RNA sequence: GGGAACGACUCGAGUAGAGUCGAAAACAUCGCGACUUCGGUCGCGAUGAAAGUUGUGCUCCCUCACGCAUAACAAAUCCCAAUGAGGCUAGGUGACUGCAAAACGACACGCCUUCGGGCGUGUCAACACUUAUACUACGUUCGCGUAGUAUAAGUGAAAAGAAACAACAACAACAAC
Reactivity to 2A3 in 0.01 (KOAc 150mM, MgCl2 10mM, bicine 150mM(pH8.5), 24C), signal-to-noise 4, nucleotides 027 to 126: c000a000u000c000g010c000g010a000c010u050u070c250g140g000u010c010g010c010g010a000u000g000a010a000a000g000u010u010g010u010g000c000u070c030c030c000u040c020a020c040g020c000a010u020a050a000c010a020a110a060u020c000c000c020a010a080u140g020a030g030g000c010u090a100g030g090u040g090a100c110u140g020c060a040a050a080a080c130g000a000c000a000c010g020c000c000u040u070c220g050g010g000c020g030u000g000u000c000a000a000
Reactivity to DMS in 0.01 (KOAc 150mM, MgCl2 10mM, bicine 150mM(pH8.5), 24C), signal-to-noise 9, nucleotides 027 to 126: c010a010u000c000g020c010g000a010c000u000u010c190g030g020u000c010g020c000g000a000u000g000a030a060a120g010u000u000g010u000g000c010u000c070c010c010u000c030a130c200g000c010a000u000a020a030c030a090a100a150u000c010c000c000a090a080u010g010a040g000g010c240u000a040g000g020u000g010a110c070u010g010c140a050a040a090a120c200g010a010c000a000c000g010c000c000u000u010c190g020g000g010c010g020u000g000u000c000a040a090